Structure probing data (2A3 and DMS) for a 177-nucleotide construct. Conditions: 150 mM KOAc, 10 mM MgCl2 and 150 mM bicine (pH 8.5), 24 C. The data come from the RNA Mapping Database (RMDB), library VIROID.
RNA sequence: GGGAACGACUCGAGUAGAGUCGAAAAAAGUGGCUCUCCCUUAGCCAUCCGAGUGGACGUGCGUCCUCCUUCGGAUGCCCAGGUCGGACCGCGAGGAGGUGGAGAUGCCAUGCCGACCCGAAGAGGAGAAGAAAUCUUAGUUCGCUAAGAUUUCUUCAAAAGAAACAACAACAACAAC
Reactivity to 2A3 in 0.01 (KOAc 150mM, MgCl2 10mM, bicine 150mM(pH8.5), 24C), signal-to-noise 2, nucleotides 027 to 126: a000a000g010u010g010g000c000u010c000u000c040c000c010u020u060a040g000c020c020a070u000c010c010g030a070g090u090g030g010a050c080g110u210g110c100g020u080c000c020u020c020c030u090u090c020g000g040a030u050g010c000c000c000a030g000g040u060c030g040g070a100c020c020g070c040g030a080g050g030a030g000g050u180g020g000a020g000a050u230g010c010c000a000u010g020c000c000g030a060c020c010c020g000a040a020g110a010g100g050a130
Reactivity to DMS in 0.01 (KOAc 150mM, MgCl2 10mM, bicine 150mM(pH8.5), 24C), signal-to-noise 3, nucleotides 027 to 126: a050a090g020u000g000g000c020u010c020u010c010c000c220u000u020a100g010c150c030a060u010c000c000g030a080g030u000g000g020a040c030g030u010g040c090g000u000c010c010u000c050c070u000u010c030g000g000a040u000g010c050c040c010a100g020g010u000c040g010g000a300c030c080g010c140g010a130g020g000a060g000g000u010g010g000a030g000a040u020g020c010c000a000u000g000c060c020g010a040c010c000c030g000a070a070g000a100g010g010a270